[RMDB]
RNA sequence: GGGAACGACUCGAGUAGAGUCGAAAAUUCAAGCGAUUCGUCGCUUGAACCUGUGGAGACUCAAGCAAAAUUGUUCCCUUUUGCUUUUGCUUUCCUCUUUUAAGUAGUAGUGCUUCGGCACUACUAAGUUUACCGAUGAAUUCGUUCAUCGGUAAACAAAAGAAACAACAACAACAAC
Reactivity to DMS in 0.01 (KOAc 150mM, MgCl2 10mM, bicine 150mM(pH8.5), 24C), signal-to-noise 2, nucleotides 027 to 126: u000u000c010a010a000g020c010g020a020u000u010c250g020u000c000g000c010u000u000g000a010a050c030c010u000g030u000g000g000a030g020a030c010u000c050a000a010g000c020a010a010a010a030u010u020g010u000u000c000c000c000u000u000u000u000g000c010u000u000u000u000g010c150u000u000u000c010c010u000c020u010u000u000u010a060a180g010u010a000g010u000a010g010u000g000c000u010u020c190g040g010c010a000c000u000a000c000u000a000a060
Reactivity to 2A3 in 0.01 (KOAc 150mM, MgCl2 10mM, bicine 150mM(pH8.5), 24C), signal-to-noise 2, nucleotides 027 to 126: u030u000c000a000a000g010c000g000a000u020u110c170g050u020c000g140c000u020u000g010a010a010c000c010u050g020u040g010g020a010g010a010c010u010c040a010a000g000c010a020a010a040a070u230u300g020u010u030c020c000c000u000u000u000u000g000c000u000u000u020u010g000c000u020u010u010c000c000u060c080u110u150u070u160a190a130g050u030a010g000u010a000g010u030g020c000u010u090c280g120g000c000a000c000u000a010c000u010a010a000
This 177-nucleotide RNA was probed chemically with DMS and 2A3. The 2A3 profile rests on 2,925 reads. For 2A3 the reverse transcriptase was SuperScript II with manganese. The reactions ran in a buffer of 150 mM KOAc, 10 mM MgCl2 and 150 mM bicine (pH 8.5), at 24 C. Source: RMDB library M2PK50, as collected in RNAgym.